[RMDB]
RNA sequence: GGGAACGACUCGAGUAGAGUCGAAAACUCAAUCACUACGGUGAUUGAGAAUGCUUACGCCUCAAUAAAGCUUGAUUCGAGUGCCUCGAGCAGAUAUAGACUGAAACAUUUAGUAUGGUCAAGCAGGGAGCAACAGCUCGAGUACGCUCGAGCUGAAACCCAUACUAGGGUUCGCCCUAGUAUGGGUAAAAGAAACAACAACAACAAC
Reactivity to DMS in 0.01 (KOAc 150mM, MgCl2 10mM, bicine 150mM(pH8.5), 24C), signal-to-noise 2, nucleotides 027 to 156: c000u000c000a030a020u000c000a020c010u000a040c290g160g010u010g000a010u000u030g010a000g010a070a070u000g000c070u000u010a100c120g000c040c030u000c000a160a100u010a090a130a130g000c000u000u000g000a120u010u000c050g000a070g020u000g020c050c020u020c030g000a160g020c010a080g000a140u000a120u000a080g000a100c020u000g010a150a050a080c020a060u000u000u000a090g000u000a100u000g010g000u000c030a030a060g050c030a100g020g000g000a010g040c010a080a140c000a070g010c000u000c000g000a010g030u020a110c300g020c020u010c010g000a020g040c010u000g000a010a100
Reactivity to 2A3 in 0.01 (KOAc 150mM, MgCl2 10mM, bicine 150mM(pH8.5), 24C), signal-to-noise 3, nucleotides 027 to 156: c000u000c000a000a000u010c000a000c000u030a020c220g080g000u010g000a010u000u010g000a010g000a030a050u060g000c010u080u060a150c100g050c010c010u080c080a090a220u190a300a080a060g020c030u020u020g030a030u190u010c060g020a030g050u080g050c020c060u070c090g030a030g000c010a010g050a030u170a010u090a110g090a080c060u040g060a080a090a050c000a040u090u090u070a040g040u080a040u100g030g010u020c010a010a000g000c010a030g040g000g050a110g030c040a040a070c020a050g000c000u010c000g000a010g010u020a030c190g030c010u000c000g000a000g000c000u020g020a040a000